[RMDB]
RNA sequence: GGGAACGACUCGAGUAGAGUCGAAAAGCCAUCGCUUUCGAGCGAUGGCAUUGCCCAAAGAGGACCUGGGGGUGUCUGGGCAGCUAAACUCAUCAGCCGUUCUACCGCUAAAUUUCGAUUUAGCGAACCAUAUCGAUAUGUUCGCAUAUCGAUAUGGAAAAGAAACAACAACAACAAC
Reactivity to 2A3 in 0.01 (KOAc 150mM, MgCl2 10mM, bicine 150mM(pH8.5), 24C), signal-to-noise 5, nucleotides 027 to 126: g000c000c000a000u000c000g000c020u080u070u140c260g110a010g000c000g000a000u000g000g000c000a000u010u080g010c000c010c000a060a150a020g160a030g030g020a030c030c040u100g060g030g000g000g030u040g010u000c030u050g010g020g000c000a000g010c020u070a080a020a040c010u010c010a060u020c010a020g010c010c000g000u020u000c040u150a270c040c010g000c000u010a020a010a000u120u110u080c170g030a020u000u020u000a000g000c000g010a020a030
Reactivity to DMS in 0.01 (KOAc 150mM, MgCl2 10mM, bicine 150mM(pH8.5), 24C), signal-to-noise 6, nucleotides 027 to 126: g010c000c000a000u000c000g010c000u000u000u000c160g020a030g030c000g020a010u000g010g000c000a000u000u010g030c000c000c000a080a110a130g010a110g020g000a040c040c040u010g010g020g000g000g010u010g010u000c040u000g010g000g000c040a050g010c080u000a060a080a040c020u000c010a100u000c080a040g010c020c010g010u000u000c020u000a140c140c030g000c010u010a000a010a020u000u000u010c150g010a040u000u000u000a010g010c000g010a090a160

Chemical mapping of a 177-nucleotide RNA with 2A3 and DMS. For 2A3, 25,862 sequencing reads were counted. Source: RMDB library M2PK50, as collected in RNAgym. Reactivities are rounded to 0.1 and cut off at 0 and 3.